Chemical mapping of a 177-nucleotide RNA with 2A3.
The RNA was probed in 150 mM KOAc, 10 mM MgCl2 and 150 mM bicine (pH 8.5) at 24 C.

RNA sequence: GGGAACGACUCGAGUAGAGUCGAAAACGAGAGCGACCCAUUUGCUGGCAGACAAUCCAGUCUCAUUACAAGGCAAACGUGAUGGGGCUGUUUUCUGCGCUUAACCCCGUCUUCCAAUAAUUGGAAAGCCGUCUCCUAGCUUCGGCUAGGAGACGGCAAAAGAAACAACAACAACAAC
Reactivity to 2A3 in 0.01 (KOAc 150mM, MgCl2 10mM, bicine 150mM(pH8.5), 24C), signal-to-noise 1, nucleotides 027 to 126: c050g000a010g000a060g040c110g030a160c000c000c060a100u170u030u030g040c000u080g070g040c000a000g000a000c020a000a020u010c020c000a030g000u000c000u000c000a000u040u000a060c030a060a110g210g150c030a050a000a110c130g000u020g000a020u000g000g110g000g000c040u000g000u010u010u010u010c000u000g000c010g000c050u060u000a000a000c000c000c000c060g110u050c090u040u070c080c000a000a140u160a240a040u140u020g000g050a020a020a020